[RMDB]
RNA sequence: GGGAACGACUCGAGUAGAGUCGAAAACACACGGCCUGAAUGUGACCGAUCUUUGAAAGUGUAGUUCACAAAGUAGUUCUCAUCCAUGGAUGCUCCAGGCUCCUCUGGUGAUUCCAUGCUAGCCAACUUCUCUCUCUGCCAGCUGUCUGCAAAGCAAAAGUUGAGGACAUUUCGAUGUCCUCAACUUAAAAGAAACAACAACAACAAC
Reactivity to 2A3 in 0.01 (KOAc 150mM, MgCl2 10mM, bicine 150mM(pH8.5), 24C), signal-to-noise 1, nucleotides 027 to 156: c070a000c000a000c040g070g050c000c000u070g070a170a050u110g020u000g040a030c000c000g090a160u060c080u100u100u050g220a250a210a090g070u050g000u110a030g060u120u110c060a050c020a070a070a000g010u060a000g010u000u020c020u000c000a070u000c010c030a000u040g000g010a010u070g070c040u000c000c010a020g030g000c050u120c060c070u120c020u020g020g000u060g140a110u120u000c020c000a000u040g010c070u040a030g010c000c010a000a060c050u130u050c010u000c000u010c000u010c010u010g040c040c000a000g010c010u040g010u100c030u090g000c010a030a050a090g120c030a050a160
Record summary:
Conditions: 150 mM KOAc, 10 mM MgCl2 and 150 mM bicine (pH 8.5), 24 C. This 207-nucleotide RNA was probed chemically with 2A3. As a SHAPE reagent, 2A3 marks flexible, mostly unpaired nucleotides at the ribose 2'-OH. Values cover nucleotides 27 to 156. It was measured as part of the RMDB library OK3TST.